[RMDB]
RNA sequence: GGGAACGACUCGAGUAGAGUCGAAAAAAGCGGAACUGGAUUCGGCGCUGUUGGCGGCGGCCGGGUUCGGCAACACCACAGCCGAUGUCUUCGACCGCGGCGGGCCGUAUCUGCAGCGGGGGGUCGCCAAUUACGGACCAUUCGUGGUCCGUAAUUGAAAAGAAACAACAACAACAAC
Reactivity to 2A3 in 0.01 (KOAc 150mM, MgCl2 10mM, bicine 150mM(pH8.5), 24C), signal-to-noise 6, nucleotides 027 to 126: a010a000g110c080g040g020a070a030c040u120g040g020a060u070u060c020g050g000c080g010c070u050g030u080u090g130g000c040g010g000c000g050g010c010c010g040g010g000u050u060c000g010g000c020a050a060c030a070c110c030a050c070a030g010c010c010g020a040u080g080u060c050u130u120c130g090a150c000c020g070c000g050g010c000g010g080g010c000c020g020u040a080u040c020u060g020c020a010g020c010g020g020g000g020g000g010u030c000g000c030
Reactivity to DMS in 0.01 (KOAc 150mM, MgCl2 10mM, bicine 150mM(pH8.5), 24C), signal-to-noise 5, nucleotides 027 to 126: a060a050g020c010g010g000a090a110c100u040g000g000a100u010u000c040g000g000c050g030c050u010g010u010u020g000g000c060g010g020c030g000g020c040c040g010g000g000u010u010c020g010g000c020a090a070c080a130c110c120a080c200a120g000c010c010g000a030u020g000u010c030u010u010c060g000a080c020c000g000c010g010g020c020g010g000g010c030c030g000u010a040u030c020u020g000c040a070g000c050g000g010g000g010g000g030u000c010g000c060